[RMDB]
RNA sequence: GGGAACGACUCGAGUAGAGUCGAAAACAGGAGGGCAUCCUGGAGGAGGCACGCCAGCCAAAUGGGAGACCGGGCCGCGGGGGCGCGAGGGGGGAGGACUGGGCGGGGAACUCGGGUGACUCACGUCCAAAGCCAUCACAUUCGUGUGAUGGCUUUGAAAAGAAACAACAACAACAAC
Reactivity to DMS in 0.01 (KOAc 150mM, MgCl2 10mM, bicine 150mM(pH8.5), 24C), signal-to-noise 2, nucleotides 027 to 126: c020a050g030g020a070g060g020g000c100a100u000c030c020u020g010g000a080g000g000a080g020g010c130a110c070g000c050c030a060g000c020c050a020a140a160u080g000g010g010a110g010a140c110c020g010g000g010c000c070g020c150g000g000g000g000g000c050g020c040g020a060g010g000g010g000g000g070a060g010g000a070c150u010g000g000g030c060g000g010g000g000a020a070c150u010c060g000g000g000u000g000a050c040u010c060a090c180g000u000c060
Reactivity to 2A3 in 0.01 (KOAc 150mM, MgCl2 10mM, bicine 150mM(pH8.5), 24C), signal-to-noise 2, nucleotides 027 to 126: c020a010g050g030a030g010g160g020c060a080u110c020c000u040g000g010a100g010g020a030g020g020c040a020c060g010c020c000a020g050c060c010a030a170a100u100g020g000g000a050g020a030c020c010g000g000g030c010c020g090c020g000g010g010g010g000c020g020c010g040a240g020g000g000g000g000g020a150g010g050a020c130u090g020g010g030c060g000g000g000g020a020a000c070u060c100g000g040g020u010g000a030c040u040c040a040c100g040u000c020

This 177-nucleotide RNA was probed chemically with DMS and 2A3. For DMS the reverse transcriptase was MarathonRT. The RNA was probed in 150 mM KOAc, 10 mM MgCl2 and 150 mM bicine (pH 8.5) at 24 C. For DMS, 2,245 sequencing reads were counted.